The record gives the reactivity of an RNA of 177 nucleotides to DMS and 2A3. The 2A3 profile rests on 1,162 reads. The RNA was probed in 150 mM KOAc, 10 mM MgCl2 and 150 mM bicine (pH 8.5) at 24 C.
[RMDB]
RNA sequence: GGGAACGACUCGAGUAGAGUCGAAAAAGGAAUCGAGGCUGAUCAUACUUGAGCAAGCGCAUUCGGAAGAGAGUGUUAUAUGGACGAGGAAGGGUCUUUCGGGCGGCAAUGGAUGGCAUCGAUUGAGAUGGCCAUACGGUUUCGACCGUAUGGCCAUAAAAGAAACAACAACAACAAC
Reactivity to DMS in 0.01 (KOAc 150mM, MgCl2 10mM, bicine 150mM(pH8.5), 24C), signal-to-noise 1, nucleotides 027 to 126: a030g010g020a030a060u000c000g000a040g000g060c040u000g000a190u030c050a040u050a190c060u020u000g040a120g030c140a160a110g000c040g020c080a110u000u000c000g070g010a080a140g100a120g000a100g110u000g000u080u050a090u040a270u000g140g000a000c220g000a060g010g000a040a040g000g010g060u000c030u000u000u030c110g000g000g000c020g000g000c050a060a020u000g000g000a030u050g000g010c010a000u000c000g000a000u000u030g000a010g030
Reactivity to 2A3 in 0.01 (KOAc 150mM, MgCl2 10mM, bicine 150mM(pH8.5), 24C), signal-to-noise 2, nucleotides 027 to 126: a010g230g000a080a030u120c100g030a100g000g020c050u040g100a030u000c020a030u100a170c110u090u060g030a010g030c080a070a000g080c000g030c100a030u060u050c030g050g000a050a000g000a000g000a000g040u030g010u140u010a110u010a040u250g050g030a000c030g090a010g020g030a070a010g000g000g030u000c000u010u080u050c000g000g000g010c050g000g010c060a080a010u110g000g000a020u070g000g000c010a000u000c010g090a030u010u080g040a140g020